[RMDB]
RNA sequence: GGGAACGACUCGAGUAGAGUCGAAAAGAUAUGGACCCGAACAGACAUGCUGUAAGUGUCGGAAACGACAUAUCAGCAACAGCUGUAGGGUCCUAAGUCAAAACAGCGCUCGUUCGCGAGCGCUGAAGUUGUCAAGGUAGUUCGCUACCUUGACAACAAAAGAAACAACAACAACAAC
Reactivity to 2A3 in 0.01 (KOAc 150mM, MgCl2 10mM, bicine 150mM(pH8.5), 24C), signal-to-noise 3, nucleotides 027 to 126: g020a020u040a040u080g030g000a000c010c000c010g000a100a010c000a010g080a010c140a300u300g010c000u000g030u280a300a300g080u080g010u060c010g000g020a030a030a010c010g030a000c020a000u110a030u160c010a000g020c090a050a030c080a040g050c000u000g030u030a050g000g020g000u000c010c000u000a000a000g000u010c000a000a030a100a180c000a000g010c000g000c010u000c000g150u110u210c300g070c020g130a000g000c000g030c010u000g000a010a020
Reactivity to DMS in 0.01 (KOAc 150mM, MgCl2 10mM, bicine 150mM(pH8.5), 24C), signal-to-noise 2, nucleotides 027 to 126: g000a020u010a230u020g010g000a010c000c000c000g020a130a100c000a000g000a030c080a300u010g020c000u010g010u000a120a160g040u000g040u000c010g000g010a070a040a080c010g020a010c000a060u010a230u000c000a030g040c010a060a050c300a130g000c000u010g000u000a300g000g000g010u010c000c000u000a000a120g000u000c020a110a110a180a250c010a000g010c000g020c000u000c000g000u000u020c260g020c020g000a000g000c000g000c000u000g000a020a080